[RMDB]
RNA sequence: GGGAACGACUCGAGUAGAGUCGAAAACGACAUGUCCAUAAUGUUAAUGAAGCGCAUAGCAGUCACUAGUAAAUUAGGAGUUAUACAUUGCUUCUAUAGCAUCAGAAAUUGUAUAUCAGGCCAGGUAGGUGAUCGACCUAUUCGUAGGUCGAUCACCAAAAGAAACAACAACAACAAC
Reactivity to DMS in 0.01 (KOAc 150mM, MgCl2 10mM, bicine 150mM(pH8.5), 24C), signal-to-noise 1, nucleotides 027 to 126: c090g000a100c080a050u020g000u020c020c070a130u000a080a020u000g000u000u010a050a210u010g010a110a090g000c000g010c100a050u000a050g020c060a050g000u010c020a060c070u000a020g040u000a060a100a060u000u000a020g010g010a070g040u010u000a060u000a050c140a080u020u000g020c050u000u000c080u000a080u000a050g020c030a020u000c080a050g000a050a060a090u000u000g060u000a070u020a050u010c020a060g000g000c040c040a060g010g010u010a080
Reactivity to 2A3 in 0.01 (KOAc 150mM, MgCl2 10mM, bicine 150mM(pH8.5), 24C), signal-to-noise 1, nucleotides 027 to 126: c020g010a020c000a050u080g000u020c040c010a070u030a120a100u070g050u060u040a090a030u160g100a030a060g020c010g020c090a030u060a040g080c070a030g060u080c050a060c130u080a000g040u040a020a100a290u160u070a000g020g010a050g080u020u000a090u010a040c060a140u100u190g010c080u000u020c030u030a110u020a070g070c050a010u130c080a000g110a000a070a090u080u020g060u020a160u000a020u140c070a020g180g000c010c010a000g070g010u080a030

The record gives the reactivity of an RNA of 177 nucleotides to DMS and 2A3. Conditions: 150 mM KOAc, 10 mM MgCl2 and 150 mM bicine (pH 8.5), 24 C. Source: RMDB library OK2TRN, as collected in RNAgym. For 2A3 the reverse transcriptase was SuperScript II with manganese.